This 207-nucleotide RNA was probed chemically with 2A3 and DMS.
RNA sequence: GGGAACGACUCGAGUAGAGUCGAAAAAAGGGUGGCUUGUCCCAUAGGAACAUUAAGAUCUGUAGAUGUGGACAUAACUGCUUAUACAAUAUUAUAUGAUACAGCGGAUAAUAUUAAGAAAUACAAGUUUGUCAGAUUGGCAACGCUACUAUCCAAACAUGUCAGAAUGUUUCGACAUUCUGACAUGAAAAGAAACAACAACAACAAC
Reactivity to 2A3 in 0.01 (KOAc 150mM, MgCl2 10mM, bicine 150mM(pH8.5), 24C), signal-to-noise 3, nucleotides 027 to 156: a000a020g090g000g010u010g020g000c000u010u010g020u020c030c000c010a010u080a030g070g030a060a020c010a020u110u140a100a090g050a090u070c060u100g080u110a020g030a070u060g060u130g100g000a010c010a040u140a110a060c020u020g030c000u080u060a040u080a110c010a010a050u030a030u210u080a040u030a020u130g020a030u050a090c050a020g020c040g030g000a000u020a110a040u040a050u090u160a160a050g030a090a110a010u150a020c010a010a090g020u040u040u020g020u010c010a010g050a300u100u100g010g000c000a000a000c050g010c020u020a060c000u030a060u020c030c030a020a000a050
Reactivity to DMS in 0.01 (KOAc 150mM, MgCl2 10mM, bicine 150mM(pH8.5), 24C), signal-to-noise 2, nucleotides 027 to 156: a080a060g010g010g020u000g010g000c020u000u010g030u020c000c020c020a150u000a120g030g010a070a080c040a060u010u000a160a170g010a150u020c050u000g040u010a120g000a070u000g020u000g030g000a040c020a040u000a070a050c040u000g040c040u010u010a110u000a030c060a030a100u000a160u000u000a040u000a070u020g000a190u000a020c060a110g010c070g030g020a120u010a020a090u000a050u000u000a090a130g000a070a050a110u000a050c060a020a080g020u000u000u000g030u000c040a090g010a130u000u000g010g000c010a040a050c080g070c040u000a010c080u000a070u010c000c010a030a080a230

Conditions: 150 mM KOAc, 10 mM MgCl2 and 150 mM bicine (pH 8.5), 24 C.